[RMDB]
RNA sequence: GGGAACGACUCGAGUAGAGUCGAAAAGAAGAGACCGCCACUAGGAGUCAGGGUUCAGACACGAUCCAAGAGAACACGGUAACACUGACUGUGGAGCGGAAGAGGCAAAGAGAGUGGCGGAAGAGAAGCGUACCAUGCGUUUCGACGCAUGGUACGCAAAAGAAACAACAACAACAAC
Reactivity to 2A3 in 0.01 (KOAc 150mM, MgCl2 10mM, bicine 150mM(pH8.5), 24C), signal-to-noise 1, nucleotides 027 to 126: g110a100a030g100a000g090a000c000c000g000c000c000a000c030u070a050g280g000a030g090u010c000a000g020g000g000u000u070c060a020g060a130c010a040c080g000a000u010c040c010a200a020g010a000g000a020a000c040a000c090g010g010u070a040a000c000a000c030u000g070a000c000u010g010u020g070g130a060g000c020g030g060a020a020g080a040g020g000c000a090a040a040g220a030g000a000g000u000g040g040c060g020g000a120a000g080a010g000a040a000